Chemical mapping of a 177-nucleotide RNA with 2A3 and DMS. The RNA was probed in 150 mM KOAc, 10 mM MgCl2 and 150 mM bicine (pH 8.5) at 24 C.
RNA sequence: GGGAACGACUCGAGUAGAGUCGAAAAUUGUAGAUAAGUCUUUGUCAAUUGAGGAGUUUGCUGACGUAGUAAAGGAACAAGUCUCAGACUUGCUUGUUAAAUUACUGCGUGGAAUGCCGAUUCCAGAGCUAAGGUAAAGGUUCGCCUUUACCUUAGCAAAAGAAACAACAACAACAAC
Reactivity to 2A3 in 0.01 (KOAc 150mM, MgCl2 10mM, bicine 150mM(pH8.5), 24C), signal-to-noise 3, nucleotides 027 to 126: u060u030g040u060a050g020a170u060a080a100g050u050c040u050u100u090g080u060c040a080a150u040u150g050a100g030g000a030g010u000u040u020g000c000u030g020a000c010g000u000a000g000u000a010a010a030g100g020a010a000c000a000a000g000u000c060u020c130a070g030a160c020u060u050g020c010u000u010g030u010u050a080a110a000u020u000a000c000u000g020c020g010u030g010g140a130a010u060g000c010c000g030a000u000u000c000c010a030g020a000
Reactivity to DMS in 0.01 (KOAc 150mM, MgCl2 10mM, bicine 150mM(pH8.5), 24C), signal-to-noise 3, nucleotides 027 to 126: u000u020g010u000a080g010a120u010a050a100g010u000c080u000u000u020g000u000c070a050a150u000u000g020a180g000g000a060g020u000u000u010g000c020u000g010a030c000g010u000a010g000u010a010a020a060g010g000a020a020c000a000a010g010u010c100u000c160a150g010a050c170u010u000g010c020u000u010g000u000u010a020a050a070u000u000a010c000u000g000c000g020u000g020g000a070a060u000g000c020c050g000a090u000u000c010c000a150g000a220
Source information:
2A3 adducts were read by reverse transcription with SuperScript II with manganese.